The record gives the reactivity of an RNA of 177 nucleotides to 2A3.
RNA sequence: GGGAACGACUCGAGUAGAGUCGAAAAUGCUUAUGCACCAACAUAUGUUAGUGUUGAUGACAAGUAUAAGACGAGUGAUGAGCUUUGCGUGAAUCUUAAUUUACCCGCAAAUGUCCCAUACUCUCGUGCCAGGUAAGAUGUUCGCAUCUUACCUGGCAAAAGAAACAACAACAACAAC
Reactivity to 2A3 in 0.01 (KOAc 150mM, MgCl2 10mM, bicine 150mM(pH8.5), 24C), signal-to-noise 1, nucleotides 027 to 126: u020g030c020u120u030a030u270g000c000a000c000c010a000a000c010a020u060a050u150g300u170u250a130g000u020g010u020u000g010a070u030g000a000c010a120a000g000u000a050u020a110a060g120a020c000g000a010g000u040g010a020u010g000a000g000c000u000u000u000g020c020g000u070g050a040a070u050c080u120u110a130a080u210u050u080a080c000c030c000g000c010a000a000a030u100g110u180c000c000c000a000u050a090c030u060c000u000c020g030u000
The reactions ran in a buffer of 150 mM KOAc, 10 mM MgCl2 and 150 mM bicine (pH 8.5), at 24 C.
The 2A3 profile rests on 879 reads.